[RMDB]
RNA sequence: GGGAACGACUCGAGUAGAGUCGAAAAUGUGGCCGGCGCCGGCGAUGUCAAGGGCGGCCUGGCUUGCGGCGGUGAUGGGGUUGCUGAGCGCGUCGCCCACCACCGGGAUACGCUGGGCGUCCUGGCCCAUAUCGCAGAUGUUCGCAUCUGCGAUAUGAAAAGAAACAACAACAACAAC
Reactivity to 2A3 in 0.01 (KOAc 150mM, MgCl2 10mM, bicine 150mM(pH8.5), 24C), signal-to-noise 5, nucleotides 027 to 126: u150g010u100g020g020c020c000g020g020c040g020c030c000g010g010c020g100a100u080g030u100c050a080a100g050g010g020c020g000g030c020c030u030g130g000c010u010u100g040c040g100g000c020g050g060u090g020a120u150g050g030g030g020u060u090g050c050u100g060a060g060c080g010c020g030u020c020g120c000c000c000a030c010c000a030c020c000g050g030g000a060u100a050c030g000c010u120g180g080g000c010g010u080c010c060u050g000g000c000c010
Reactivity to DMS in 0.01 (KOAc 150mM, MgCl2 10mM, bicine 150mM(pH8.5), 24C), signal-to-noise 6, nucleotides 027 to 126: u010g020u010g010g020c010c000g010g000c030g020c020c010g000g010c020g010a080u000g020u010c040a140a110g010g000g010c030g010g010c020c050u010g020g000c030u000u010g020c060g010g010c010g020g010u000g000a070u000g010g000g000g010u000u000g020c010u010g010a120g020c100g010c270g010u000c040g000c010c000c010a080c050c050a050c090c060g000g010g000a060u000a050c040g010c000u000g020g030g010c010g010u010c010c030u000g020g010c010c030